[RMDB]
RNA sequence: GGGAACGACUCGAGUAGAGUCGAAAAGCGCGAAGCGGUGUAGCGUCACUUUGAUGGCGGUACUAUGAAUUGAUGCAAGGUGUGGAGCGACCUUAAACAGUUCUGUUGGUGCUCUGAAUGGAGUGCUUGAGGCCUCGCCGAUUCGUCGGCGAGGCAAUGUUGCUUUUUGGUUCGCCAAAAAGCAACAAAAAGAAACAACAACAACAAC
Reactivity to 2A3 in 0.01 (KOAc 150mM, MgCl2 10mM, bicine 150mM(pH8.5), 24C), signal-to-noise 2, nucleotides 027 to 156: g070c030g000c050g160a060a010g050c030g020g000u060g000u030a050g050c000g000u030c010a000c040u180u120u150g160a240u060g040g000c020g070g040u010a040c030u040a040u110g100a060a130u040u030g030a060u080g050c060a080a030g000g000u000g040u050g030g000a000g030c020g030a030c000c000u050u110a050a130a000c000a030g000u000u010c000u000g110u050u050g040g010u000g020c000u000c000u050g120a080a050u250g020g000a010g000u010g020c020u050u050g100a090g070g000c000c030u010c000g000c010c000g000a000u050u050c170g050u000c010g070g000c000g000a000g000g000c000a000a000
An RNA of 207 nucleotides, treated with 2A3 and read out base by base. The RNA was probed in 150 mM KOAc, 10 mM MgCl2 and 150 mM bicine (pH 8.5) at 24 C. The 2A3 profile rests on 868 reads.